[RMDB]
Conditions: 150 mM KOAc, 10 mM MgCl2 and 150 mM bicine (pH 8.5), 24 C.
An RNA of 177 nucleotides, treated with 2A3 and DMS and read out base by base.
2A3 adducts were read by reverse transcription with SuperScript II with manganese.
Values are in units of 0.01, from 0 to 300, in steps of 10.
Reactivities are given for positions 27 through 126.

RNA sequence: GGGAACGACUCGAGUAGAGUCGAAAAAUGCACUGGUUCGCCAGUGCAUGAUUACCGAGAAAGUACGUCGGUAUAAAAGUGCAACCCUUGGAAACAAGGGAAUUCCGAACCGAUUCGUCGGUUCGAACGACAUUAACGUAUUCGUACGUUAAUGUCGAAAAGAAACAACAACAACAAC
Reactivity to 2A3 in 0.01 (KOAc 150mM, MgCl2 10mM, bicine 150mM(pH8.5), 24C), signal-to-noise 6, nucleotides 027 to 126: a000u000g000c000a000c010u010g000g030u050u040c110g050c070c000a010g010u000g000c000a000u000g000a010u000u030a010c000c000g000a020g020a050a210a010g220u150a050c090g110u000c010g030g040u030a020u070a060a120a020a020g170u150g110c040a100a150c010c000c000u000u000g010g010a040a040a020c000a000a000g000g000g040a000a030u050u000c040c000g010a000a000c000c000g000a010u040u110c210g050u000c010g040g000u000u000c000g000a030a020
Reactivity to DMS in 0.01 (KOAc 150mM, MgCl2 10mM, bicine 150mM(pH8.5), 24C), signal-to-noise 7, nucleotides 027 to 126: a010u000g010c000a000c000u000g000g010u010u020c210g020c000c010a010g020u000g000c000a000u000g000a130u020u000a040c010c000g000a060g010a120a130a130g020u010a080c140g010u000c010g010g010u000a050u000a040a070a100a090g010u000g020c170a100a120c010c000c000u000u000g000g000a160a110a190c010a000a010g000g000g000a030a030u010u000c080c010g000a000a010c000c000g000a030u000u010c200g010u000c010g000g000u000u010c000g010a030a100